RNA sequence: GGGAACGACUCGAGUAGAGUCGAAAAGAUAUGGAAGACGAAGACAGCCCAUGGAGUCGGUCGGAAACGAUACGACGAUGAAAUGGGUCGAGUCUUCCUAAGUCAAACAUUCUCUUCGGAGAAUGAAUCGUCUAGUAUACUUCGGUAUACUAGACGAAAAAGAAACAACAACAACAAC
Reactivity to 2A3 in 0.01 (KOAc 150mM, MgCl2 10mM, bicine 150mM(pH8.5), 24C), signal-to-noise 2, nucleotides 027 to 126: g000a000u080a010u140g000g000a000a010g000a010c020g030a090a020g060a080c070a030g040c000c000c010a000u020g010g000a040g010u020c030g000g040u040c000g010g010a120a100a040c040g010a010u300a300c030g000a010c010g000a070u040g000a010a010a010u020g030g000g000u100c000g010a010g010u040c010u000u000c000c000u000a030a010g030u020c010a040a080a070c000a000u000u000c020u000c000u020u040c270g130g000a010g000a000a010u030g000a020a140
Reactivity to DMS in 0.01 (KOAc 150mM, MgCl2 10mM, bicine 150mM(pH8.5), 24C), signal-to-noise 5, nucleotides 027 to 126: g010a040u000a300u000g000g010a040a010g010a010c010g010a110a150g010a070c300a170g000c010c000c010a010u000g000g000a170g020u000c000g010g010u000c000g010g000a090a100a190c060g000a010u000a110c000g010a010c000g010a040u020g010a110a090a000u000g010g000g010u000c030g000a130g020u000c000u010u000c000c000u010a020a110g000u000c020a130a100a240c010a010u010u000c000u000c000u000u010c180g000g010a020g000a010a000u000g010a050a110